[RMDB]
RNA sequence: GGGAACGACUCGAGUAGAGUCGAAAAGAUAUGGAUCCAUAAGUAUGGAGUCGGUCGGAAACGACACGACGUAGAGAUACAUGGAUCCUAAGUCAAACGCACUGUAAACUUCGGUUUACAGUGCGAAGGGCAUAAAUAAGUUCGCUUAUUUAUGCCCAAAAGAAACAACAACAACAAC
Reactivity to 2A3 in 0.01 (KOAc 150mM, MgCl2 10mM, bicine 150mM(pH8.5), 24C), signal-to-noise 4, nucleotides 027 to 126: g020a000u030a010u110g000g000a000u000c020c000a030u050a200a170g020u020a010u090g160g010a030g000u000c000g000g010u010c000g010g040a040a040a030c030g020a010c170a150c300g010a000c020g000u030a030g020a010g010a030u010a000c010a000u000g000g000a000u000c000c000u000a030a010g020u020c030a090a040a070c020g000c000a000c000u000g000u000a010a000a010c000u040u060c230g020g000u000u000u000a000c000a000g000u000g000c000g000a000a000
Reactivity to DMS in 0.01 (KOAc 150mM, MgCl2 10mM, bicine 150mM(pH8.5), 24C), signal-to-noise 4, nucleotides 027 to 126: g010a040u000a300u000g010g010a010u000c000c000a010u010a120a140g020u000a010u000g010g020a140g020u000c000g020g000u000c000g020g000a070a050a120c000g000a020c000a090c000g010a010c010g000u010a110g010a250g000a030u000a000c010a030u000g000g000a010u000c000c000u010a020a050g000u000c000a110a120a300c000g000c000a000c000u000g010u000a000a000a010c000u000u040c160g010g000u000u000u000a000c000a010g010u000g010c010g000a010a050